[RMDB]
RNA sequence: GGGAACGACUCGAGUAGAGUCGAAAAGAUAUGGACUGCCGGGCUCAACAGCCACCAGUCGGAAACGACUGUGUGGACAUGAGCAGGCAGUCCUAAGUCAAAACGGCAAUUCUUCGGAAUUGCCGAACAUCCUGGAGAGCUUCGGCUCUCCAGGAUGAAAAGAAACAACAACAACAAC
Reactivity to 2A3 in 0.01 (KOAc 150mM, MgCl2 10mM, bicine 150mM(pH8.5), 24C), signal-to-noise 1, nucleotides 027 to 126: g010a010u020a030u080g000g010a000c010u010g000c030c040g270g300g000c090u070c140a300a180c070a250g000c000c000a010c010c010a010g000u000c030g000g010a000a000a000c000g020a000c000u040g110u100g000u010g280g000a000c090a300u300g010a010g070c020a020g010g040c020a000g000u000c000c000u000a000a000g000u020c010a000a000a080a130c000g000g050c000a010a000u010u010c040u130u160c300g000g000a000a010u030u000g010c030c000g000a000a000